Background: Structure probing data (2A3) for a 207-nucleotide construct.
RNA sequence: GGGAACGACUCGAGUAGAGUCGAAAAGGACAAAUUGAGCGUGGACUUCGUCGCCUAGCAACAAACAUCCGUGGCAUGGUUGACGAGAUGGCUUACAAAGUAGCAACAAACGGCUACACAAUUGGUGGAGGCAUUCAAGGUUUAACUAAGUCUGGUACGGUAGAUCACGAUUCGUCGUGAUCUACCGAAAAGAAACAACAACAACAAC
Reactivity to 2A3 in 0.01 (KOAc 150mM, MgCl2 10mM, bicine 150mM(pH8.5), 24C), signal-to-noise 1, nucleotides 027 to 156: g160g010a020c010a000a090a080u100u070g000a020g040c050g030u070g030g010a000c000u030u000c020g000u020c040g010c000c030u120a030g000c010a010a180c050a030a180a020c020a230u000c070c200g020u010g000g000c030a030u100g000g000u140u300g000a000c020g000a010g000a040u040g030g050c000u050u070a040c050a010a160a090g030u030a020g000c050a030a100c040a170a080a030c100g050g030c000u030a000c060a000c040a000a110u090u120g050g000u050g040g010a000g030g080c110a130u070u060c050a100a050g010g000u000u040u070a030a010c020u090a060a020g130u010c080u080g040g010u070a090
For 2A3, 566 sequencing reads were counted. Source: RMDB library OK3TST, as collected in RNAgym.